The record gives the reactivity of an RNA of 177 nucleotides to 2A3. Conditions: 150 mM KOAc, 10 mM MgCl2 and 150 mM bicine (pH 8.5), 24 C. It was measured as part of the RMDB library RFM100.
RNA sequence: GGGAACGACUCGAGUAGAGUCGAAAAUCUUUCGGGUCUUCAGCUUGCCUCGCCUGAAUCACUGCACUCGUGUGGUGAGCGGGGGCUGCAUGGCUACAAACGGAAAUGCUGGGAAGGAUUUUUUCCCCCAGUACGGCGUUUUCGAACGCCGUACUGGAAAAGAAACAACAACAACAAC
Reactivity to 2A3 in 0.01 (KOAc 150mM, MgCl2 10mM, bicine 150mM(pH8.5), 24C), signal-to-noise 2, nucleotides 027 to 126: u040c000u000u050u030c060g010g000g000u000c000u070u040c020a000g000c020u160u170g160c000c010u030c020g110c000c070u140g170a070a070u030c010a000c000u030g020c010a000c010u100c180g060u000g000u000g010g020u000g000a000g010c010g000g000g000g020g000c030u030g030c070a090u100g020g000c030u100a080c180a030a110a000c060g050g030a090a060a060u140g000c020u050g140g010g000a010a030g020g000a020u020u000u000u000u030u040c010c000c000